[RMDB]
The data come from the RNA Mapping Database (RMDB), library M2RFPK. The record gives the reactivity of an RNA of 207 nucleotides to DMS and 2A3. The RNA was probed in 150 mM KOAc, 10 mM MgCl2 and 150 mM bicine (pH 8.5) at 24 C.
RNA sequence: GGGAACGACUCGAGUAGAGUCGAAAACGUGCCUUCAUGCUAAGGGUUUGAUAUCUGCUAAAACCCGGUGCAUUCAUCAAUGCAGGUUAAGCCAAAGGGAUGUCCCGACCGGAGGCCGAGAAUCCAGAUAGCUCAAGAAUGUUCGCAUUCUUGAGAAGAAUUGAAACAGGUUCGCCUGUUUCAAUUCAAAAGAAACAACAACAACAAC
Reactivity to DMS in 0.01 (KOAc 150mM, MgCl2 10mM, bicine 150mM(pH8.5), 24C), signal-to-noise 4, nucleotides 027 to 156: c030g020u000g030c050c030u000u000c040a080u010g050c030u010a300a200g000g010g010u000u000u010g010a160u010a070u000c030u000g000c070u000a180a040a040a050c010c030c010g020g050u010g010c010a040u000u000c070a030u000c100a120a200u000g000c000a050g020g020u000u000a080a100g000c040c010a030a300a190g010g010g000a060u010g000u000c020c010c020g000a180c020c040g020g000a300g020g030c010c010g000a090g000a110a100u000c050c020a150g000a180u000a090g020c000u000c000a030a030g010a030a020u000g000u000u000c300g030c020a020u000u000c000u000u000g000a020g010a030a080
Reactivity to 2A3 in 0.01 (KOAc 150mM, MgCl2 10mM, bicine 150mM(pH8.5), 24C), signal-to-noise 4, nucleotides 027 to 156: c040g080u130g030c000c020u130u140c070a050u090g010c020u070a040a050g020g000g000u020u020u010g030a050u060a090u120c050u080g010c040u090a030a030a060a040c010c050c020g020g000u030g010c010a090u070u190c020a060u100c060a100a160u130g030c010a020g070g000u050u080a030a020g010c010c000a040a010a040g020g020g000a030u040g040u030c030c000c000g000a010c020c010g000g000a000g010g010c020c000g020a050g070a040a060u040c040c020a030g070a170u120a050g040c000u000c000a000a000g000a000a000u010g010u110u080c210g020c120a000u000u000c000u000u000g000a000g000a000a000